Chemical mapping of a 177-nucleotide RNA with DMS and 2A3. For DMS the reverse transcriptase was MarathonRT. For 2A3, 794 sequencing reads were counted. Conditions: 150 mM KOAc, 10 mM MgCl2 and 150 mM bicine (pH 8.5), 24 C. The data come from the RNA Mapping Database (RMDB), library RFM100. The DMS profile rests on 1,457 reads. Reactivities are given for positions 27 through 126.
[RMDB]
RNA sequence: GGGAACGACUCGAGUAGAGUCGAAAAACUGCACGUACGCGUGCAGAAUAAGGAGCACACCAUGCAAUAUGCCAUUGCAGGGUGGCCUGUUGCUGGCUGCCCUUCCAGCGGAGCUACGGCUCCGCAAAACAAGCUAGGUCUUCGGACCUAGCUUGUUAAAAGAAACAACAACAACAAC
Reactivity to DMS in 0.01 (KOAc 150mM, MgCl2 10mM, bicine 150mM(pH8.5), 24C), signal-to-noise 2, nucleotides 027 to 126: a090c000u000g030c010a030c000g060u000a020c150g080c000g020u000g030c020a000g000a010a080u020a060a000g020g010a160g000c000a090c300a160c000c000a030u010g000c030a040a000u030a090u040g020c090c080a000u000u010g000c180a090g000g020g000u000g010g030c010c010u000g000u000u000g020c020u000g020g000c300u020g030c000c020c010u010u010c030c000a030g000c010g020g010a050g060c060u000a290c200g030g000c000u000c000c020g040c000a000a020
Reactivity to 2A3 in 0.01 (KOAc 150mM, MgCl2 10mM, bicine 150mM(pH8.5), 24C), signal-to-noise 1, nucleotides 027 to 126: a000c000u000g000c000a000c010g040u070a030c270g000c020g120u000g000c000a000g020a000a000u120a020a010g080g000a130g060c000a100c000a020c030c000a020u250g030c000a000a000u000a040u070g020c020c010a010u000u120g060c080a020g030g000g020u010g000g000c010c010u120g000u100u070g050c080u000g020g010c030u020g010c000c020c000u050u010c010c000a000g000c040g040g000a000g000c010u010a040c090g050g000c000u020c000c010g010c000a000a010